Structure probing data (DMS and 2A3) for a 177-nucleotide construct. Reactivities are given for positions 27 through 126. For DMS the reverse transcriptase was MarathonRT.
[RMDB]
RNA sequence: GGGAACGACUCGAGUAGAGUCGAAAAGACUGCUGCAGGUGUUGGAGGGCAGUGUGUGUUGUGUGGGGACUGUGUGGACAGGUAUCACCCAGACAGCUUGCACUGACUCCAGACCCUGCUGUCAUAACAAGCACCAAGAUUUCGAUCUUGGUGCUUGAAAAGAAACAACAACAACAAC
Reactivity to DMS in 0.01 (KOAc 150mM, MgCl2 10mM, bicine 150mM(pH8.5), 24C), signal-to-noise 2, nucleotides 027 to 126: g020a160c110u010g010c030u000g000c000a020g010g010u020g000u030u000g000g010a010g000g010g020c010a020g000u000g020u000g010u000g000u000u010g000u000g010u000g000g000g000g040a070c010u000g020u000g020u070g010g000a020c000a000g020g000u020a090u010c150a210c000c000c000a010g010a010c010a020g000c010u000u000g020c010a030c000u000g000a170c000u000c000c000a010g000a020c030c000c030u000g000c000u000g000u010c020a070u020a110a160
Reactivity to 2A3 in 0.01 (KOAc 150mM, MgCl2 10mM, bicine 150mM(pH8.5), 24C), signal-to-noise 5, nucleotides 027 to 126: g080a020c070u040g020c020u010g000c010a000g000g020u110g010u100u040g000g010a030g020g120g210c000a000g000u000g000u000g000u000g000u000u020g020u010g030u010g010g000g010g020a030c000u010g010u000g150u260g120g200a010c000a010g040g010u140a080u160c050a170c110c000c000a000g020a060c000a000g000c000u050u190g000c010a000c010u000g000a010c010u000c000c000a010g010a010c000c000c000u000g000c000u000g000u050c000a000u040a080a070